[RMDB]
RNA sequence: GGGAACGACUCGAGUAGAGUCGAAAAUCCGGUCGUCACACUCAGUGACGAUGGCGGGGUGUCGGAGGUGUCCGCCUGAUGUACCUGAUUAUCGUCGGCGCGGGGAAAAUCGGGUCGAACCUCAUCGAGAUGGCGACCGGCGACGGUAACGACGUCGCGGGAACUAUGUGUUCGCACAUAGUUCCCGAAAAGAAACAACAACAACAAC
Reactivity to DMS in 0.01 (KOAc 150mM, MgCl2 10mM, bicine 150mM(pH8.5), 24C), signal-to-noise 1, nucleotides 027 to 156: u010c000c010g000g010u000c000g000u000c000a000c010a220c120u000c140a110g060u000g000a040c000g020a030u010g010g030c000g030g020g000g020u010g000u000c040g000g030a090g020g040u030g020u020c030c050g000c020c010u000g030a110u000g020u010a070c040c020u000g000a070u010u000a110u000c020g000u000c030g000g020c100g050c010g050g000g030g000a060a050a060a120u000c040g020g030g000u000c070g000a110a210c030c010u000c030a090u010c070g010a110g030a070u010g020g000c030g010a060c010c020g000g010c040g000a020c020g010g050u000a070a110c060g010a080c010g000u000c010g010
Reactivity to 2A3 in 0.01 (KOAc 150mM, MgCl2 10mM, bicine 150mM(pH8.5), 24C), signal-to-noise 7, nucleotides 027 to 156: u000c000c000g000g010u000c000g000u000c010a070c010a070c070u030c030a080g030u050g140a090c070g020a090u090g030g010c020g000g010g000g030u120g060u100c070g050g050a060g010g040u070g120u060c010c000g020c000c000u020g020a040u080g010u070a060c010c020u040g040a110u030u140a090u170c140g100u050c060g060g080c100g030c070g060g010g010g030a000a100a020a030u020c010g010g000g020u030c020g010a040a060c010c020u020c000a040u110c050g030a030g020a040u030g010g000c000g000a000c000c010g010g010c000g000a000c000g000g050u070a100a010c060g080a020c000g040u020c000g000